[RMDB]
RNA sequence: GGGAACGACUCGAGUAGAGUCGAAAAGACACCCUUUGCAGAUGACCUCCUCGUUGGUGUGUGUCGGUAAUGUUGUCAGUCACAGGCAACAGUUAACGAUCUGCCUAAAUAAAAAGAGAAGAACAAAACCCUGGUAAUGGUUCGCCAUUACCAGGGUAAAAGAAACAACAACAACAAC
Reactivity to 2A3 in 0.01 (KOAc 150mM, MgCl2 10mM, bicine 150mM(pH8.5), 24C), signal-to-noise 3, nucleotides 027 to 126: g100a020c040a060c050c000c000u000u070u060g060c050a060g010a110u040g040a050c010c000u020c000c000u060c020g100u070u110g040g020u060g000u020g000u010g040u030c000g030g050u100a070a080u010g000u000u000g000u000c010a060g100u090c040a080c060a180g000g010c000a000a000c000a010g020u000u080a030a020c020g010a030u000c000u000g000c000c000u130a180a210a100u220a100a080a030a050a000g100a020g000a070a030g030a100a000c030a030a090a020
Reactivity to DMS in 0.01 (KOAc 150mM, MgCl2 10mM, bicine 150mM(pH8.5), 24C), signal-to-noise 2, nucleotides 027 to 126: g010a140c070a080c060c000c000u010u060u020g060c020a040g010a030u030g020a100c100c000u000c040c020u000c040g080u020u020g010g030u000g010u000g100u030g000u000c000g010g020u020a040a050u010g010u000u010g000u000c020a140g020u020c230a120c220a210g000g030c000a000a010c000a080g030u010u010a000a020c000g000a000u010c000u000g010c060c180u060a040a130a090u040a020a070a080a040a080g000a020g010a070a150g000a070a050c120a040a090a120